[RMDB]
RNA sequence: GGGAACGACUCGAGUAGAGUCGAAAAAUCCACUGAUUCGUCAGUGGAUGAACGUCCUAAGUCUCGUGCCGAGUUGUCAGAGGAUAUCGGAAACGAUAUACCCUCUUGGAUUUAUAUCACGAGAUAUGGAAUACACUGUUAACUUCGGUUAACAGAAUAACCACAUUGUGUUCGCACAAUGUGGUUAAAAAGAAACAACAACAACAAC
Reactivity to 2A3 in 0.01 (KOAc 150mM, MgCl2 10mM, bicine 150mM(pH8.5), 24C), signal-to-noise 3, nucleotides 027 to 156: a000u000c000c000a000c000u010g000a020u030u120c270g050u000c170a000g000u000g010g000a000u040g030a060a020c060g050u010c000c000u010a150a040g020u000c000u010c010g020u000g070c100c080g140a070g120u050u120g130u190c020a010g010a010g020g010a000u000a000u010c000g020g070a080a040a040c000g010a000u010a010u080a150c030c030c000u020c000u020u070g030g010a000u000u240u050a150u110a010u130c010a020c010g010a010g000a020u020a030u070g020g030a000a040u130a080c110a010c040u000g000u010u000a000a000c000u010u050c190g150g000u000u000a000a000c000a000g010a010a020
Reactivity to DMS in 0.01 (KOAc 150mM, MgCl2 10mM, bicine 150mM(pH8.5), 24C), signal-to-noise 3, nucleotides 027 to 156: a050u000c000c010a040c000u000g000a030u000u000c300g060u000c000a000g040u010g020g030a000u000g010a060a080c120g020u000c010c000u010a120a210g000u010c000u000c000g030u000g010c210c100g010a130g020u020u010g000u000c070a030g050a030g020g030a070u000a040u010c010g000g010a240a140a300c060g020a040u000a040u000a070c050c010c010u000c010u000u000g020g000a100u000u000u000a100u020a110u030c010a010c030g000a050g010a040u000a300u000g000g000a080a090u000a090c100a210c010u000g000u000u010a000a010c010u000u000c300g040g020u000u000a010a000c000a020g000a070a090
The data come from the RNA Mapping Database (RMDB), library RNAMAK.
An RNA of 207 nucleotides, treated with 2A3 and DMS and read out base by base.
For DMS, 5,091 sequencing reads were counted.
The reactions ran in a buffer of 150 mM KOAc, 10 mM MgCl2 and 150 mM bicine (pH 8.5), at 24 C.